[RMDB]
RNA sequence: GGGAACGACUCGAGUAGAGUCGAAAAUGGUUUGCCGGAGAGCAGUGGAGGCUUGACGUGUUUUCGACGCACGGAAAAAUCUAUGAGGCAUCCGCUAGCCAGAUGUUCGGAAUUCCAAUUGAGGAGACGCGUAGUUAGAUUUCGAUCUAACUACGCGAAAAGAAACAACAACAACAAC
Reactivity to 2A3 in 0.01 (KOAc 150mM, MgCl2 10mM, bicine 150mM(pH8.5), 24C), signal-to-noise 1, nucleotides 027 to 126: u040g020g000u010u010u040g060c080c020g030g020a080g000a020g000c020a010g000u040g060g020a030g000g000c000u010u030g010a010c010g000u010g010u060u060u090u270c110g100a070c090g000c020a000c000g050g040a040a080a030a010a030u090c060u020a060u160g110a040g150g000c000a000u010c000c000g000c000u010a020g010c000c000a060g040a170u150g140u080u060c020g020g040a030a060u070u010c000c000a050a140u080u220g030a120g060g030a030g020a020
Reactivity to DMS in 0.01 (KOAc 150mM, MgCl2 10mM, bicine 150mM(pH8.5), 24C), signal-to-noise 3, nucleotides 027 to 126: u010g000g010u000u000u000g010c080c010g020g000a040g010a200g030c040a150g000u000g000g000a060g010g030c150u000u000g020a180c030g000u000g020u000u000u010u010c180g010a060c260g000c030a020c020g010g010a030a050a080a180a110u000c080u000a060u020g000a110g000g020c020a100u000c010c000g000c010u000a070g020c030c060a090g000a090u010g000u000u000c040g020g000a090a080u000u000c000c010a050a130u000u020g000a140g000g000a140g000a190